[RMDB]
The data come from the RNA Mapping Database (RMDB), library OK1LIB. The record gives the reactivity of an RNA of 177 nucleotides to 2A3.

RNA sequence: GGGAACGACUCGAGUAGAGUCGAAAAACCGGGGUUUUCCCUUGGAUUUGCUCUACAAGCAUCGCUCAUGAGUGCACAGCUUCAAAUUACCAAAGAUCGUCCAGAAGCUGCUAUGGACUUUAUUGAAGGGAUGACUCACUUUCGAGUGAGUCAUCCCAAAAGAAACAACAACAACAAC
Reactivity to 2A3 in 0.01 (KOAc 150mM, MgCl2 10mM, bicine 150mM(pH8.5), 24C), signal-to-noise 2, nucleotides 027 to 126: a000c040c010g010g000g000g000u120u000u040u140c020c010c000u070u240g050g000a010u030u000u070g050c030u100c000u040a030c080a020a000g110c030a060u050c090g030c070u040c010a010u180g070a000g070u180g060c010a000c010a030g000c000u020u010c060a040a100a250u070u090a160c060c030a060a170a050g200a040u110c090g020u050c090c070a060g000a050a000g000c050u000g060c030u050a100u030g040g030a000c000u110u000u090a080u010u140g130a230a040